An RNA of 177 nucleotides, treated with DMS and read out base by base.
RNA sequence: GGGAACGACUCGAGUAGAGUCGAAAAACAAAAUACGCCAGCUUCUCAAAGGUGUCACCCUUGACAAGUUGCGUGAUUAUUUAGCUGACUAUGACGUAGCAGUCACUGCCGGCCCAUUCAUGGAUAAUCUAGCUUAGAUCUUCGGAUCUAAGCUAGAAAAAGAAACAACAACAACAAC
Reactivity to DMS in 0.01 (KOAc 150mM, MgCl2 10mM, bicine 150mM(pH8.5), 24C), signal-to-noise 1, nucleotides 027 to 126: a110c060a100a040a070a020u000a050c010g000c020c060a010g000c000u000u010c250u000c000a030a010a010g050g010u000g000u010c230a040c110c010c030u000u000g010a030c020a030a010g020u000u000g000c090g000u010g000a100u000u000a020u020u010u000a120g000c000u010g010a000c050u000a060u000g000a070c090g000u000a150g010c070a150g000u000c020a020c080u040g030c040c000g000g000c000c030c020a080u000u010c120a060u030g000g000a100u000a030a110